[RMDB]
RNA sequence: GGGAACGACUCGAGUAGAGUCGAAAAUACUCGUUCGCGAGUAAAAAAAGCGUACUACCGUUGAGGACCGUAAGACAGGAGCAAUCCCAAAUAGGAUUGUCUCCAAUGACGCGGUCUACCCACCAACGGUAUCGCAAAAAACCGUGUUCGCACGGAAGCGUCAACUCUUAUUCGUAAGAGUUGACGCAAAAGAAACAACAACAACAAC
Reactivity to 2A3 in 0.01 (KOAc 150mM, MgCl2 10mM, bicine 150mM(pH8.5), 24C), signal-to-noise 1, nucleotides 027 to 156: u110a000c010u000c010g030u110u020c280g020c040g090a030g070u120a130a000a000a000a000a000a000g000c000g000u020a070c060u000a000c000c000g020u000u000g010a020g080g000a010c000c000g040u020a130a040g000a060c040a130g000g010a000g000c000a000a000u050c000c020c110a140a280a100u220a110g010g020a000u000u020g000u100c030u000c010c050a020a040u000g060a040c080g000c000g000g000u000c000u010a010c000c000c000a040c000c000a000a040c000g000g000u000a060u270c060g000c000a000a000a120a100a000a000c000c000g000u000g000u000u040c140g000c030a030c000g040g020a050a030